[RMDB]
Background:
An RNA of 207 nucleotides, treated with 2A3 and read out base by base.

RNA sequence: GGGAACGACUCGAGUAGAGUCGAAAAUUCAUUUAGAUGAAUUGAAACAAAUUUAAUACAAGUGGAUGUAGGAUAACCGUCCGUCCUUUACAUUGGUAUAAAAGUGAUCUAAAAUUCUAUUUAUAAUUGCGCUCUCGCGUGUUCGCACGCGAGAGAAGGAGUAGAUCUGAUUCGUCAGAUCUACUCCAAAAGAAACAACAACAACAAC
Reactivity to 2A3 in 0.01 (KOAc 150mM, MgCl2 10mM, bicine 150mM(pH8.5), 24C), signal-to-noise 1, nucleotides 027 to 156: u030u030c020a000u090u130u080a130g020a060u000g020a020a080u030u090g070a030a070a000c050a000a080a120u110u090u170a100a200u100a070c030a060a100g090u030g050g000a030u030g020u100a000g020g000a030u000a020a100c060c030g100u000c030c010g020u010c010c000u110u030u000a050c050a110u100u000g020g010u060a060u060a120a020a050a050g020u030g030a030u010c020u080a030a100a080a050u230u010c030u110a300u090u210u000a210u130a130a180u110u070g070c060g000c050u020c000u010c000g000c010g000u030g080u120u100c190g000c090a000c000g000c000g000a000g000a000g000a000a020

The reactions ran in a buffer of 150 mM KOAc, 10 mM MgCl2 and 150 mM bicine (pH 8.5), at 24 C.